[RMDB]
RNA sequence: GGGAACGACUCGAGUAGAGUCGAAAAAUAAGUGAUGUAAGGGGUUACAUAGCAACAAAGUUUGAACCAACAACAAAAACAGCUUUUUCUGUAUAUGUGCUGAAUAAGCUGAAAACUGGUGCCAUGGUCAGCAAACAAGAUUCGUCUUGUUUGCUGAAAAAGAAACAACAACAACAAC
Reactivity to DMS in 0.01 (KOAc 150mM, MgCl2 10mM, bicine 150mM(pH8.5), 24C), signal-to-noise 3, nucleotides 027 to 126: a080u000a070a120g020u010g000a060u000g020u010a060a050g010g010g010g010u010u000a050c050a030u000a090g020c050a050a050c110a040a090a110g000u010u010u000g020a110a140c060c020a060a060c070a060a040c070a040a040a080a100a170c010a000g000c030u000u000u000u000u000c010u010g020u000a100u020a110u000g010u000g010c020u000g000a020a020u000a000a000g020c000u000g000a040a010a080a050c140u000g010g020u000g000c030c060a040u000g000g010
Reactivity to 2A3 in 0.01 (KOAc 150mM, MgCl2 10mM, bicine 150mM(pH8.5), 24C), signal-to-noise 2, nucleotides 027 to 126: a000u150a120a020g050u030g060a090u080g020u070a040a030g140g000g050g000u020u020a030c010a030u100a050g030c020a000a100c010a090a230a080g040u060u060u050g020a050a000c030c010a000a130c000a000a020c000a020a110a010a010a010c020a000g000c010u000u010u000u030u000c000u000g150u010a020u010a080u300g200u090g120c000u000g000a000a000u040a020a000g000c000u000g010a030a020a000a050c060u080g010g060u050g010c040c070a030u040g010g030
Structure probing data (DMS and 2A3) for a 177-nucleotide construct. The 2A3 profile rests on 1,286 reads. Reactivities are given for positions 27 through 126. The DMS profile rests on 1,991 reads. Source: RMDB library OK2TRN, as collected in RNAgym. Conditions: 150 mM KOAc, 10 mM MgCl2 and 150 mM bicine (pH 8.5), 24 C.